RNA sequence: GGGAACGACUCGAGUAGAGUCGAAAACCCUCUGGAUCUCAGAGCUCUGGGAGGGAGUAUGUUGAGAUGUUCACAGUGGGGAGGACUAAAGGCCCUACUCUUGGGCCCAGAAGCAUAGCUGCCUUCACAGGAACAUGCGGAGGGCUGUUACAAGUAAGUACGCGUACUAUUUCGAUAGUACGCGUACAAAAGAAACAACAACAACAAC
Reactivity to 2A3 in 0.01 (KOAc 150mM, MgCl2 10mM, bicine 150mM(pH8.5), 24C), signal-to-noise 2, nucleotides 027 to 156: c000c000c000u000c000u000g110g030a110u100c010u020c080a050g040a060g080c030u030c020u130g070g000g010a030g010g060g010a020g010u090a070u190g080u040u020g010a020g000a070u000g000u040u020c040a010c040a100g020u040g000g000g020g000a010g090g010a000c050u200a160a080a060g060g010c000c020c000u020a020c070u090c030u020u030g030g000g010c000c000c010a130g110a120a000g000c000a040u100a080g040c050u160g140c010c030u100u150c100a040c050a060g020g020a070a010c030a030u080g010c050g000g020a040g000g000g000c000u060g020u060u040a050c020a000a010g120u240a140a000
This 207-nucleotide RNA was probed chemically with 2A3. The reactions ran in a buffer of 150 mM KOAc, 10 mM MgCl2 and 150 mM bicine (pH 8.5), at 24 C. It was measured as part of the RMDB library OK3TST.